[RMDB]
RNA sequence: GGGAACGACUCGAGUAGAGUCGAAAAAAUAUAUAUCGUGAUGGGGAUAGAUUAUUGCAAUUAUUAAUCUUGAACGAGGAAUGCCUAGUAAGCAUGAUUCAUCAGAUUGUGCUGACUACGUCCCUGCCCUUUGUACACACCGCCCGUCGCUCCUACCGUAAUUAGAGGUGUUCGCACCUCUAAUUACAAAAGAAACAACAACAACAAC
Reactivity to DMS in 0.01 (KOAc 150mM, MgCl2 10mM, bicine 150mM(pH8.5), 24C), signal-to-noise 3, nucleotides 027 to 156: a080a070u000a090u010a070u000a050u010c070g010u000g010a080u000g020g010g020g000a130u000a050g000a050u000u000a020u000u000g000c020a120a110u000u000a050u010u000a020a040u000c030u000u010g010a080a100c080g010a100g020g010a080a020u010g010c040c040u000a090g030u000a050a020g010c010a010u000g010a120u000u000c080a210u000c300a170g000a040u000u000g030u010g000c000u000g000a040c020u000a020c060g020u000c000c010c000u000g020c020c010c010u000u000u030g010u010a050c060a070c050a060c040c020g010c040c000c050g010u000c020g010c000u000c010c010u000a070c170c110
Reactivity to 2A3 in 0.01 (KOAc 150mM, MgCl2 10mM, bicine 150mM(pH8.5), 24C), signal-to-noise 5, nucleotides 027 to 156: a000a000u240a000u040a010u010a040u070c030g000u040g040a040u050g000g000g030g000a020u050a080g030a020u040u050a040u070u120g050c050a080a060u120u030a070u140u090a190a020u020c040u040u080g050a060a040c060g000a030g020g010a070a020u060g020c000c010u010a020g020u110a030a010g000c000a010u010g010a020u100u090c050a120u050c040a170g020a060u020u030g010u000g030c010u010g020a010c010u020a030c050g010u030c010c000c000u010g030c000c000c000u060u030u100g090u060a030c050a010c020a020c050c020g030c000c020c020g020u030c010g010c010u020c010c000u030a090c030c070